[RMDB]
RNA sequence: GGGAACGACUCGAGUAGAGUCGAAAAAGGAGGGCUUGCAUUUACUUGCCGGUGCAGCCUCAGCGAGGUCUGGAGCGAGUGGAGGAAGAGGAGGAGGAGAACGAGAACCCGAGGGCCGGCGUGGACCCGAUUCGAAUAGGUUCGCCUAUUCGAAUCGAAAAGAAACAACAACAACAAC
Reactivity to 2A3 in 0.01 (KOAc 150mM, MgCl2 10mM, bicine 150mM(pH8.5), 24C), signal-to-noise 1, nucleotides 027 to 126: a000g120g010a050g030g020g040c080u100u040g000c010a050u040u060u030a110c080u090u110g030c040c020g000g000u040g010c010a020g040c010c000u000c000a050g050c050g030a050g010g030u100c040u120g010g030a060g010c080g040a030g070u110g040g040a030g000g050a090a050g010a020g080g010a040g020g000a070g020g000a050g000a040a030c050g000a050g030a220a070c030c000c020g020a060g060g010g010c060c060g040g020c070g000u080g010g030a020c020c010
Reactivity to DMS in 0.01 (KOAc 150mM, MgCl2 10mM, bicine 150mM(pH8.5), 24C), signal-to-noise 2, nucleotides 027 to 126: a060g010g020a160g000g010g020c060u000u010g040c030a060u000u010u020a090c070u010u020g000c070c030g030g010u000g020c050a080g020c010c000u000c020a100g020c070g000a080g010g000u000c090u000g010g010a090g020c060g000a110g020u020g000g010a100g000g000a050a100g000a110g040g010a140g020g000a090g030g000a080g000a070a070c050g000a150g030a120a120c040c060c010g010a160g000g010g030c040c040g000g000c050g030u000g000g020a090c140c110
Conditions: 150 mM KOAc, 10 mM MgCl2 and 150 mM bicine (pH 8.5), 24 C. An RNA of 177 nucleotides, treated with 2A3 and DMS and read out base by base. Values are in units of 0.01, from 0 to 300, in steps of 10. For 2A3 the reverse transcriptase was SuperScript II with manganese.